[RMDB]
An RNA of 177 nucleotides, treated with DMS and 2A3 and read out base by base. It was measured as part of the RMDB library M2PK90. High 2A3 reactivity points to a flexible backbone, as in loops and unpaired stretches.
RNA sequence: GGGAACGACUCGAGUAGAGUCGAAAAGAAAAAGGAGGACAUGUCCGCCUGAUUGUGUCCGACCCUGUAGAUACUUCGCUCUGGAAAUUGUGCGGGACAACCCACGCGGGCAGCGAGCCGAAAAAAACGAUAUAAUUCGUUUCGACGAAUUAUAUCGAAAAGAAACAACAACAACAAC
Reactivity to DMS in 0.01 (KOAc 150mM, MgCl2 10mM, bicine 150mM(pH8.5), 24C), signal-to-noise 5, nucleotides 027 to 126: g010a060a050a080a100a100g000g020a210g010g010a050c050a060u010g010u000c000c060g020c030c070u010g010a100u000u010g020u010g000u010c000c010g000a070c040c020c020u010g010u010a030g000a110u010a070c160u000u010c100g000c030u000c040u000g010g000a090a070a120u010u000g010u010g000c010g010g000g000a040c060a030a050c050c050c040a040c160g010c020g020g000g020c020a040g000c080g010a090g010c020c030g000a010a000a060a060a050a060a110
Reactivity to 2A3 in 0.01 (KOAc 150mM, MgCl2 10mM, bicine 150mM(pH8.5), 24C), signal-to-noise 4, nucleotides 027 to 126: g050a010a130a020a000a010g060g030a030g010g010a010c020a070u030g010u000c000c010g010c030c040u040g010a070u060u130g020u010g080u060c010c010g020a060c020c010c010u020g080u110a050g030a090u130a220c050u080u110c070g030c020u000c030u060g050g070a110a210a190u190u110g080u160g180c000g000g000g010a020c010a020a030c020c040c010a000c020g040c010g000g020g010c010a000g050c030g030a060g000c010c030g120a090a030a010a000a010a000a000